[RMDB]
RNA sequence: GGGAACGACUCGAGUAGAGUCGAAAAGGCUUAUAAUACGGCCUACCUCUGCCAAAGUUGAGUAGUUCGUAGCGGUGGUAGCUCUCCGACAAAUAGAUAUCCAUGAUCCUGCCUGAGAAGGGAAUAGCCCAGAGGGCUCUUUCGAGAGCCCUCUGGGAAAAGAAACAACAACAACAAC
Reactivity to 2A3 in 0.01 (KOAc 150mM, MgCl2 10mM, bicine 150mM(pH8.5), 24C), signal-to-noise 1, nucleotides 027 to 126: g050g020c100u160u220a150u190a200a140u110a170c100g060g000c000c000u000a000c020c000u000c000u010g080c020c020a100a100a200g030u050u030g040a040g000u000a000g000u000u000c010g150u080a020g000c000g000g000u030g050g010u060a040g000c040u010c000u010c000c010g060a050c090a020a080a020u240a020g100a030u120a040u000c030c000a010u080g000a030u090c000c000u040g000c000c000u000g070a110g110a100a080g010g040g070a050a270u020a070g060
Structure probing data (2A3) for a 177-nucleotide construct. Conditions: 150 mM KOAc, 10 mM MgCl2 and 150 mM bicine (pH 8.5), 24 C.